[RMDB]
Structure probing data (DMS and 2A3) for a 177-nucleotide construct. Conditions: 150 mM KOAc, 10 mM MgCl2 and 150 mM bicine (pH 8.5), 24 C. It was measured as part of the RMDB library OK2TST.
RNA sequence: GGGAACGACUCGAGUAGAGUCGAAAACAUCAACGGCGUAGUACAGCAGGGCGCCGGCCCGCUCACCGAGGAAAUUGUGCUGAGCAUCGGGCAGGACUUGACAGCCGCGAGUUUCUACACUUUCCUGCCUCUAAUAUUUCUUCGGAAAUAUUAGAGGAAAAGAAACAACAACAACAAC
Reactivity to DMS in 0.01 (KOAc 150mM, MgCl2 10mM, bicine 150mM(pH8.5), 24C), signal-to-noise 7, nucleotides 027 to 126: c090a100u010c140a110a100c050g000g010c020g020u000a080g020u000a110c160a110g010c040a060g000g000g010c090g000c020c010g010g010c020c020c000g000c030u000c040a040c030c020g000a050g010g010a060a080a120u000u000g000u010g020c110u000g010a060g010c100a130u010c110g010g010g010c010a050g010g000a080c060u000u010g010a090c070a130g010c020c010g010c050g020a090g010u000u000u000c050u000a080c120a050c130u000u000u000c010c010u000g010
Reactivity to 2A3 in 0.01 (KOAc 150mM, MgCl2 10mM, bicine 150mM(pH8.5), 24C), signal-to-noise 7, nucleotides 027 to 126: c020a120u160c070a050a050c040g010g000c040g040u090a040g060u090a170c050a080g040c030a040g100g020g010c070g030c020c000g010g000c000c000c010g010c010u020c010a030c010c020g030a030g030g210a080a170a140u120u090g040u090g040c150u030g010a010g010c030a080u160c070g010g010g000c010a030g010g020a030c020u080u120g040a030c030a020g020c010c020g010c030g010a030g030u040u080u020c050u060a050c050a020c060u030u030u040c000c010u030g050